[RMDB]
RNA sequence: GGGAACGACUCGAGUAGAGUCGAAAAAGCCACCAUACUUGGCCAAGUGAAUACCUUUUUAUAUGAGUUUCUGCCCAUGAUGGGGUGGGCCUCUGUCACUGGAUUUACCAGGUCAGAGAGGUGGAUGUACCUACUGCGAGUUCGCUCGCAGUAGGUAAAAAGAAACAACAACAACAAC
Reactivity to 2A3 in 0.01 (KOAc 150mM, MgCl2 10mM, bicine 150mM(pH8.5), 24C), signal-to-noise 2, nucleotides 027 to 126: a000g060c030c000a000c040c010a110u170a290c010u010u020g000g020c000c050a110a030g000u030g040a050a030u300a300c010c000u090u100u020u090u120a140u080a100u230g010a000g030u150u210u130c020u030g030c030c000c000a030u130g100a100u150g160g010g000g000u010g010g020g000c010c000u000c000u010g030u030c000a050c100u010g010g000a000u000u000u030a080c020c030a040g020g010u000c010a020g000a020g010a040g030g000u000g010g020a030u090g000
Reactivity to DMS in 0.01 (KOAc 150mM, MgCl2 10mM, bicine 150mM(pH8.5), 24C), signal-to-noise 2, nucleotides 027 to 126: a150g010c000c000a000c000c010a100u010a110c030u000u000g010g010c000c000a130a140g000u000g000a010a030u000a160c000c000u000u000u000u020u000a060u000a060u040g010a040g000u000u000u000c000u010g000c010c000c020a070u010g030a150u020g010g000g000g030u040g010g000g000c300c000u000c000u010g000u000c300a040c060u000g000g000a170u000u000u000a020c010c080a190g000g000u000c000a020g000a010g010a160g000g000u000g000g010a070u000g010
This 177-nucleotide RNA was probed chemically with 2A3 and DMS. For DMS, 1,276 sequencing reads were counted. For 2A3, 762 sequencing reads were counted. Conditions: 150 mM KOAc, 10 mM MgCl2 and 150 mM bicine (pH 8.5), 24 C. For DMS the reverse transcriptase was MarathonRT. Source: RMDB library OK2TST, as collected in RNAgym.